[RMDB]
RNA sequence: GGGAACGACUCGAGUAGAGUCGAAAAUGCGCUAGAUUUUUAACUUAACAAAACGGACUUAAAUACCUACAGCUGGUCCUCAUAGGUGUUCCAUUGCAGUGCACUUUAGUGCCCUGGAUGGCACCUGCAAUAUACCCAGCUUCGGCUGGGUAUAUUGAAAAGAAACAACAACAACAAC
Reactivity to 2A3 in 0.01 (KOAc 150mM, MgCl2 10mM, bicine 150mM(pH8.5), 24C), signal-to-noise 9, nucleotides 027 to 126: u090g010c040g020c060u060a060g030a240u060u110u060u020u140a120a100c050u140u130a090a030c050a080a140a040a040c080g010g040a010c020u070u120a060a040a060u150a140c020c010u040a060c030a030g030c030u050g010g020u010c010c020u050c030a130u160a040g000g000u010g020u110u110c010c000a000u000u050g050c000a010g000u000g040c000a000c020u120u230u290a060g010u000g000c000c010c000u000g000g010a000u000g000g000c000a000c000c000u000g010
Reactivity to DMS in 0.01 (KOAc 150mM, MgCl2 10mM, bicine 150mM(pH8.5), 24C), signal-to-noise 5, nucleotides 027 to 126: u010g010c070g000c300u010a050g030a070u010u000u010u010u010a050a080c090u000u010a080a120c100a070a050a130a130c160g000g010a070c080u000u010a040a030a030u010a050c050c020u010a060c140a270g000c000u010g000g010u000c010c000u030c170a090u040a000g000g010u000g000u050u020c010c000a010u000u000g030c000a010g010u000g020c000a000c010u040u020u030a110g010u000g010c010c050c010u000g000g000a010u000g020g010c010a010c000c000u000g000